[RMDB]
RNA sequence: GGGAACGACUCGAGUAGAGUCGAAAACGUGUCCUGCCAGUGGUUUUACCCUAUGGUAGGUUACGUCAUGCUGUUCUACCACAGGGUAGAACCACGGACGGGAUGCAAAGGCUAAGUUCGCUUAGCCCAUUCUCUUCUACUUCGGUAGAAGAGAAUGAAAAGAAACAACAACAACAAC
Reactivity to 2A3 in 0.01 (KOAc 150mM, MgCl2 10mM, bicine 150mM(pH8.5), 24C), signal-to-noise 5, nucleotides 027 to 126: c050g000u010g010u010c000c000u000g020c010c020a080g000u000g010g010u000u000u000u000a000c000c000c000u000a010u010g010g000u010a010g010g030u100u090a020c020g030u030c040a080u260g090c100u140g020u060u020c000u000a000c000c000a010c010a010g000g000g000u000a000g000a000a000c000c000a000c000g000g000a010c010g000g000g000a000u010g000c020a100a060a010g010g000c000u010a010a000g020u050u080c120g060c100u000u000a000g000c010c000
Reactivity to DMS in 0.01 (KOAc 150mM, MgCl2 10mM, bicine 150mM(pH8.5), 24C), signal-to-noise 6, nucleotides 027 to 126: c190g020u000g010u000c000c000u000g010c000c000a050g020u000g000g000u000u000u000u000a010c020c000c000u000a060u000g000g010u000a000g010g010u000u000a010c030g020u010c250a150u010g010c120u010g020u000u000c000u000a010c000c000a030c050a020g000g000g010u000a000g010a000a000c000c010a000c010g000g010a020c010g000g010g000a020u000g020c020a070a130a120g010g010c000u000a000a010g010u000u020c300g010c010u000u000a000g000c000c000
An RNA of 177 nucleotides, treated with 2A3 and DMS and read out base by base. Conditions: 150 mM KOAc, 10 mM MgCl2 and 150 mM bicine (pH 8.5), 24 C. For 2A3, 34,404 sequencing reads were counted. The data come from the RNA Mapping Database (RMDB), library RFMREP.